[RMDB]
RNA sequence: GGGAACGACUCGAGUAGAGUCGAAAAAUGACUUAACGUUUACUACCUUCUUAACUGAGUUAAAAGGUUCAUAUAUCGGUAGAGCUAUUGAUAUGACAGAAGCUCCAUAUAACACAAUAAGAUUUAGUUAUGAAGCAUUCUUACCUAAGGGCACUAACCAGAAACUAUGAUUCGUCAUAGUUUCUGGAAAAGAAACAACAACAACAAC
Reactivity to 2A3 in 0.01 (KOAc 150mM, MgCl2 10mM, bicine 150mM(pH8.5), 24C), signal-to-noise 4, nucleotides 027 to 156: a000u070g050a030c050u120u080a190a010c060g070u030u030u090a050c030u050a030c010c010u010u020c030u040u020a040a010c020u040g060a020g070u040u060a060a080a030a010g030g010u040u050c040a040u030a020u020a040u160c080g040g020u050a030g010a030g030c020u030a060u110u110g060a100u100a090u270g100a090c040a090g100a070a020g020c000u000c020c030a010u030a000u020a110a030c040a000c040a080a120u110a120a100g020a060u040u040u130a010g000u010u000a030u060g010a020a010g000c040a090u090u070c010u040u100a080c010c030u060a040a030g030g020g030c090a020c140u110a070a040
Reactivity to DMS in 0.01 (KOAc 150mM, MgCl2 10mM, bicine 150mM(pH8.5), 24C), signal-to-noise 2, nucleotides 027 to 156: a070u010g010a050c040u010u000a040a070c000g010u010u000u000a100c010u000a070c090c020u000u000c050u000u010a040a110c050u000g000a130g010u010u000a030a090a180a190g000g030u000u000c060a070u000a060u000a060u000c030g060g020u000a040g010a060g050c000u010a130u000u000g010a200u000a070u020g010a130c080a300g020a110a100g030c000u000c010c020a070u010a060u000a060a140c040a100c070a040a120u010a110a300g010a110u000u000u000a060g030u010u010a050u000g000a000a040g000c010a100u000u000c060u000u020a080c070c000u000a030a070g000g020g030c000a060c060u000a060a250